An RNA of 177 nucleotides, treated with DMS and 2A3 and read out base by base. 2A3 adducts were read by reverse transcription with SuperScript II with manganese. Conditions: 150 mM KOAc, 10 mM MgCl2 and 150 mM bicine (pH 8.5), 24 C. The DMS profile rests on 3,691 reads. For 2A3, 3,216 sequencing reads were counted.

[RMDB]
RNA sequence: GGGAACGACUCGAGUAGAGUCGAAAAGUGCCGAUGUUCGCAUCGGCACAAAGGCUAAGCAAAAAAAAUCAGCUUGUUCGCUAAGCCACUAACGAGCAGAAAAAAUCCCUCCCUUCGGGGAGGGAAACAACGAGUAUAUCUUCGGAUAUACUCGUUGAAAAGAAACAACAACAACAAC
Reactivity to DMS in 0.01 (KOAc 150mM, MgCl2 10mM, bicine 150mM(pH8.5), 24C), signal-to-noise 3, nucleotides 027 to 126: g010u000g000c000c000g000a020u000g010u000u010c260g030c010a010u000c000g000g010c000a000c000a010a050a090g020g010c030u000a060a110g010c070a000a000a000a010a030a050a080a090u010c120a070g000c050u010u000g000u000u000c070g000c010u000a060a060g010c020c020a150c120u000a030a040c030g000a020g000c020a170g030a000a020a050a070a100a130u010c000c000c000u010c000c000c000u000u000c170g010g000g000g010a010g010g000g000a000a010a050
Reactivity to 2A3 in 0.01 (KOAc 150mM, MgCl2 10mM, bicine 150mM(pH8.5), 24C), signal-to-noise 2, nucleotides 027 to 126: g000u000g000c000c000g000a000u000g030u030u030c120g010c100a000u000c000g010g010c010a000c000a000a010a000g000g000c010u070a030a110g040c120a020a010a040a030a030a010a010a140u090c010a010g040c020u030u030g020u030u010c000g020c020u040a050a010g030c010c010a050c030u020a050a000c010g010a010g000c040a060g240a010a090a010a010a000a080u010c000c000c000u010c010c020c000u010u020c120g030g000g000g000a000g000g020g000a000a000a010